About this RNA
The record gives the reactivity of an RNA of 177 nucleotides to DMS and 2A3. 2A3 adducts were read by reverse transcription with SuperScript II with manganese. The RNA was probed in 150 mM KOAc, 10 mM MgCl2 and 150 mM bicine (pH 8.5) at 24 C.

RNA sequence: GGGAACGACUCGAGUAGAGUCGAAAACCGGUGAUUGACUGGAGGGCAAGUCUGGUGCCAGCAGCCGCGGUAAUUCCAGCUCCAGGAGUGUCAUAGUGCAUUGCUGCAUUUAAAAGGUCCGUAGUCAGAACAUAUGAGCAUUCGUGCUCAUAUGUUCAAAAGAAACAACAACAACAAC
Reactivity to DMS in 0.01 (KOAc 150mM, MgCl2 10mM, bicine 150mM(pH8.5), 24C), signal-to-noise 5, nucleotides 027 to 126: c000c000g010g010u010g020a100u010u030g020a080c020u000g010g010a100g020g000g010c060a070a080g010u020c070u000g010g000u000g000c050c060a040g030c050a090g020c090c100g020c060g000g000u030a050a110u030u000c020c000a100g010c040u020c060c060a060g000g000a060g020u020g000u020c040a090u030a070g000u020g000c010a040u030u020g000c110u010g010c020a070u000u010u010a080a060a120a150g010g000u000c040c020g010u020a090g000u010c100a140
Reactivity to 2A3 in 0.01 (KOAc 150mM, MgCl2 10mM, bicine 150mM(pH8.5), 24C), signal-to-noise 6, nucleotides 027 to 126: c000c000g000g060u120g030a160u100u050g020a040c020u020g000g050a050g040g040g010c050a100a050g040u040c040u020g030g010u040g030c020c010a040g000c030a020g040c050c100g040c030g030g010u050a050a030u140u030c010c010a020g020c010u020c030c020a030g010g020a030g020u060g020u030c050a100u090a130g030u060g080c010a030u100u120g050c030u020g010c020a040u090u100u200a060a090a020a020g040g000u010c010c020g040u020a010g050u050c040a030

High DMS reactivity at an A or C suggests that its Watson-Crick edge is free. For DMS the reverse transcriptase was MarathonRT. It was measured as part of the RMDB libraries RFM100 and RFMREP.